[RMDB]
RNA sequence: GGGAACGACUCGAGUAGAGUCGAAAAACACGGAAACCCAUCGACUGUCACCAGAUGCUGCAUCACCUGAUCACUGAUGGCUCAACGGUAUCCGGCGGUACAACUGAAUACUUGUAGCUGCCUUUUGAAAAGGAGUUCAUCUUCGGAUGAACUCCAACAGCCUAAAACGGUUCGCCGUUUUAGGCUGAAAAGAAACAACAACAACAAC
Reactivity to 2A3 in 0.01 (KOAc 150mM, MgCl2 10mM, bicine 150mM(pH8.5), 24C), signal-to-noise 1, nucleotides 027 to 156: a000c040a030c030g050g010a000a040a020c020c000c000a020u050c070g060a040c090u030g010u040c050a000c120c020a090g040a030u100g030c010u080g000c010a050u020c000a020c020c010u040g010a040u040c050a000c050u070g020a010u020g070g000c020u020c060a070a070c070g020g030u090a080u120c070c090g000g000c040g000g020u050a030c000a010a010c010u140g170a120a070u140a110c010u020u050g000u030a040g150c000u020g000c000c030u110u160u110u160g090a080a090a000a000g000g000a000g000u020u000c000a000u010c030u010u000c090g000g000a000u010g000a000a000c000u000c000c000a000a000